This 207-nucleotide RNA was probed chemically with 2A3. For 2A3 the reverse transcriptase was SuperScript II with manganese. High 2A3 reactivity points to a flexible backbone, as in loops and unpaired stretches.
[RMDB]
RNA sequence: GGGAACGACUCGAGUAGAGUCGAAAAGGGGUCCUCUGGGAGUAAUUGACGAAGCAUGUGACAUGCUCUGAAGCCUCCACGGAGCAACAGCACAUGUCGAAAUUACGAAGAACAGAGGACGGAGGCACCCAAAGAAAUAUGCUUCGGCAUAUUUCAACGUUCCACUCUAGUUCGCUAGAGUGGAACGAAAAGAAACAACAACAACAAC
Reactivity to 2A3 in 0.01 (KOAc 150mM, MgCl2 10mM, bicine 150mM(pH8.5), 24C), signal-to-noise 2, nucleotides 027 to 156: g070g000g010g030u000c010c000u000c000u020g010g020g010a050g050u030a020a070u030u110g110a150c090g090a130a040g120c050a020u020g020u040g090a280c030a150u080g000c000u000c000u020g050a090a030g000c000c040u010c020c010a020c030g000g000a000g030c010a030a080c060a110g150c000a010c000a010u060g010u110c050g020a030a030a080u040u020a020c030g080a180a040g000a060a010c000a010g000a000g000g000a000c000g000g000a000g000g000c020a040c000c010c000a050a140a040g020a000a000a010u020a000u010g000c020u010u180c300g090g000c000a000u000a010u000u010u010c000a000a030